[RMDB]
RNA sequence: GGGAACGACUCGAGUAGAGUCGAAAAUUAUCUUUGAACAUCUAGGAGCUGAAAAACUGGAUUAAUUAAGUAACUCUUGGUACAAUUGAAUAGGUUAGCAAAUCAGAGAUUGGUGGUCGCCCUACAAAGGGCGAAGGAAUUUCGAUUCCUUCGCCCUAAAAGAAACAACAACAACAAC
Reactivity to DMS in 0.01 (KOAc 150mM, MgCl2 10mM, bicine 150mM(pH8.5), 24C), signal-to-noise 1, nucleotides 027 to 126: u020u040a070u010c010u000u000u000g000a140a150c100a080u000c060u000a020g020g000a060g000c120u010g000a050a050a100a080a080c060u000g020g040a140u000u010a020a170u010u000a060a140g000u000a060a010c090u030c060u000u000g000g030u000a060c070a040a020u000u000g050a060a060u000a070g020g020u000u000a080g000c060a060a060a090u020c000a060g000a070g020a060u000u000g030g010u000g010g030u000c060g000c010c030c000u000a020c180a010a060